Chemical mapping of a 177-nucleotide RNA with DMS and 2A3. DMS adducts were read by reverse transcription with MarathonRT. It was measured as part of the RMDB libraries RFM100 and RFMREP. The reactions ran in a buffer of 150 mM KOAc, 10 mM MgCl2 and 150 mM bicine (pH 8.5), at 24 C. Values are in units of 0.01, from 0 to 300, in steps of 10.
[RMDB]
RNA sequence: GGGAACGACUCGAGUAGAGUCGAAAAUACCAAACACUUGCAAGUUCUGUUUAUUGCAAGUGCAUGGAAGAGGCGAAUAGAAAACGGAAUGAUGUCCACUCCUUCGAUUAUCGUUCAUUGGAUUGCGAUUCUAAAAUACUUUCGAGUAUUUUAGAAUAAAAGAAACAACAACAACAAC
Reactivity to DMS in 0.01 (KOAc 150mM, MgCl2 10mM, bicine 150mM(pH8.5), 24C), signal-to-noise 9, nucleotides 027 to 126: u030a200c010c010a110a160a190c010a010c000u000u000g000c000a000a010g010u010u020c120u010g010u010u010u020a050u010u000g010c000a000a000g010u000g010c110a100u010g010g010a100a060g010a070g010g010c030g000a070a090u020a090g000a060a040a080a070c100g000g000a050a050u010g010a070u010g000u000c050c040a070c060u000c040c030u000u010c050g000a060u010u020a060u010c030g010u010u000c040a120u000u010g010g000a130u000u010g010c150g000
Reactivity to 2A3 in 0.01 (KOAc 150mM, MgCl2 10mM, bicine 150mM(pH8.5), 24C), signal-to-noise 9, nucleotides 027 to 126: u120a020c010c000a010a050a010c000a000c000u010u010g000c010a020a070g030u160u140c060u130g190u150u240u130a060u010u020g000c000a000a000g000u000g000c020a050u090g040g040a060a040g020a050g070g040c050g030a050a030u100a130g110a040a130a020a010c060g020g040a050a060u090g060a070u100g070u040c030c000a020c030u020c010c000u050u060c020g050a050u040u090a070u140c030g030u050u040c040a080u080u130g110g010a100u070u130g070c050g030